[RMDB]
RNA sequence: GGGAACGACUCGAGUAGAGUCGAAAAAGAGUUCGCUUCGGCGAACUCUACAACGGGAAAACGGCCUCCCGGAAAGAUAAGGCGGUUUCCGUCCAAGCGCCGAGAGUGGUGCGUUCGCGCACCACAAGCUUUACCUCUAUUUCGAUAGAGGUAAAGCAAAAGAAACAACAACAACAAC
Reactivity to 2A3 in 0.01 (KOAc 150mM, MgCl2 10mM, bicine 150mM(pH8.5), 24C), signal-to-noise 3, nucleotides 027 to 126: a000g010a010g000u000u000c010g000c030u060u090c170g050g000c010g000a010a000c010u010c000u000a010c000a040a000c010g000g020g020a010a130a030a080c010g030g010c000c000u000c010c000c000g000g070a130a100a000g110a090u190a110a060g010g030c030g010g030u050u100u070c030c000g000u010c050c050a020a010g040c060g000c200c030g020a020g030a000g000u010g000g000u000g020c020g010u020u060c260g000c000g000c090a000c000c010a000c000a000a000
Reactivity to DMS in 0.01 (KOAc 150mM, MgCl2 10mM, bicine 150mM(pH8.5), 24C), signal-to-noise 3, nucleotides 027 to 126: a010g020a010g010u000u000c000g020c010u000u010c250g020g020c000g000a010a010c010u000c000u000a040c120a080a100c020g000g000g000a030a020a090a100c030g000g000c000c020u000c000c010c000g000g010a030a070a260g000a080u030a050a110g000g010c020g000g000u020u000u000c030c010g010u010c020c110a060a060g010c110g020c000c000g010a260g020a120g030u000g020g020u010g000c000g030u000u020c170g000c010g010c000a010c000c000a000c000a050a080

Source information: This 177-nucleotide RNA was probed chemically with 2A3 and DMS. 2A3 is a SHAPE reagent: it acylates the 2'-hydroxyl of flexible nucleotides of all four kinds. Values cover nucleotides 27 to 126. For DMS the reverse transcriptase was MarathonRT.